Background:
Structure probing data (2A3 and DMS) for a 177-nucleotide construct. The data come from the RNA Mapping Database (RMDB), library OK2TRN. DMS adducts were read by reverse transcription with MarathonRT.
[RMDB]
RNA sequence: GGGAACGACUCGAGUAGAGUCGAAAAACGCAAUAACAGCUGGGCAGAUAUGUAAAUUCAUCCAUGACACACACUCAAAGGAGCGUCCACCUUCAUAUGGAAGUAUAGCUUAAUAAAAACCCAACUCAUGUCUAACGUAAUUCGUUACGUUAGACAUAAAAGAAACAACAACAACAAC
Reactivity to 2A3 in 0.01 (KOAc 150mM, MgCl2 10mM, bicine 150mM(pH8.5), 24C), signal-to-noise 7, nucleotides 027 to 126: a010c050g000c040a060a090u110a140a050c020a040g030c030u050g010g020g000c030a030g030a100u100a050u120g100u090a030a110a070u100u050c020a020u000c040c010a030u110g030a020c010a000c010a000c000a010c080u050c040a090a090a020g070g000a030g030c020g020u010c000c010a040c010c010u050u030c040a080u090a100u300g090g020a040a020g020u040a040u050a120g010c010u040u060a080a020u070a100a140a020a020a020c000c010c020a020a050c040u070c090
Reactivity to DMS in 0.01 (KOAc 150mM, MgCl2 10mM, bicine 150mM(pH8.5), 24C), signal-to-noise 8, nucleotides 027 to 126: a070c100g000c090a080a060u010a070a090c110a070g010c030u010g010g000g020c040a060g020a110u000a030u000g010u000a030a060a090u000u000c050a050u010c050c040a060u000g000a080c080a060c090a070c070a050c040u000c070a060a080a090g010g000a080g010c050g000u010c030c040a080c070c030u000u010c080a070u020a120u000g000g010a040a040g010u000a050u010a070g010c050u000u010a050a080u010a030a050a030a110a110c020c000c010a050a090c210u010c140